[RMDB]
RNA sequence: GGGAACGACUCGAGUAGAGUCGAAAAAGACUGUAUCAUUUCAUACCCUCGUCCGUACAGUACGGCAGAUCCUUGCCAUUCCUAAUGUAAAUAGAUUUGAGUUUGUCUGGCAUGGCGGUGAAAUCACCAUCUAGCCACCUUUCGAGGUGGCUAGAUGAAAAGAAACAACAACAACAAC
Reactivity to 2A3 in 0.01 (KOAc 150mM, MgCl2 10mM, bicine 150mM(pH8.5), 24C), signal-to-noise 1, nucleotides 027 to 126: a040g050a010c040u080g030u070a100u040c070a040u070u090u090c050a050u160a150c000c020c000u000c050g060u000c000c060g020u020a040c010a120g070u020a050c070g010g000c020a020g000a090u130c000c000u070u120g000c040c000a010u010u040c020c000u070a000a140u090g070u060a020a150a040u180a090g170a090u100u060u180g080a070g010u010u150u150g070u000c050u010g000g050c030a040u070g070g000c020g000g040u060g030a040a060a020u180c030a000c130
Reactivity to DMS in 0.01 (KOAc 150mM, MgCl2 10mM, bicine 150mM(pH8.5), 24C), signal-to-noise 2, nucleotides 027 to 126: a120g010a080c040u010g000u010a090u000c100a100u010u000u010c050a080u000a120c060c010c020u010c080g010u010c040c090g010u020a060c110a060g020u000a090c130g000g000c040a080g010a080u020c070c060u020u020g030c050c020a160u000u000c020c010u000a070a070u000g010u010a030a040a060u000a090g020a120u000u000u000g010a120g000u000u010u010g010u000c040u010g000g020c100a050u000g000g000c070g010g010u000g000a060a080a100u000c070a030c120